[RMDB]
RNA sequence: GGGAACGACUCGAGUAGAGUCGAAAACUCGGCGACGUUCUCGGUCGAGUAGGCGUCGGUGACGACGGUCCGGUCCGUGCCGUACUCACCUGCGAGGACGCCACACACCUCGUGGUCGUCGCCGUCGUAAUGGUCCAGCAUUCGUGCUGGACCAUUAAAAAGAAACAACAACAACAAC
Reactivity to 2A3 in 0.01 (KOAc 150mM, MgCl2 10mM, bicine 150mM(pH8.5), 24C), signal-to-noise 2, nucleotides 027 to 126: c000u000c000g020g020c020g010a030c000g060u160u000c040u030c040g010g020u110c130g010a050g040u060a120g020g000c000g000u010c030g000g000u010g010a040c060g000a000c010g000g000u040c030c040g010g130u060c110c070g040u080g000c020c000g090u100a180c010u020c010a000c030c010u080g070c110g060a080g300g000a020c000g000c030c010a050c000a010c020a010c010c010u090c070g010u020g010g000u000c000g010u020c010g030c000c020g020u010c050g030
Reactivity to DMS in 0.01 (KOAc 150mM, MgCl2 10mM, bicine 150mM(pH8.5), 24C), signal-to-noise 2, nucleotides 027 to 126: c010u000c020g020g000c000g010a040c020g020u010u010c000u010c060g020g000u010c060g000a110g040u000a070g020g000c000g010u000c030g000g020u010g000a040c160g020a030c050g000g000u010c180c090g030g040u010c150c080g010u010g030c000c010g000u010a080c060u000c020a010c010c030u010g030c170g000a150g000g000a030c030g000c070c020a030c030a090c100a130c080c030u000c080g000u000g020g000u000c020g010u000c020g000c010c000g000u000c140g020
An RNA of 177 nucleotides, treated with 2A3 and DMS and read out base by base. The reactions ran in a buffer of 150 mM KOAc, 10 mM MgCl2 and 150 mM bicine (pH 8.5), at 24 C. It was measured as part of the RMDB library OK2TRN. The 2A3 profile rests on 2,201 reads. The DMS profile rests on 2,382 reads.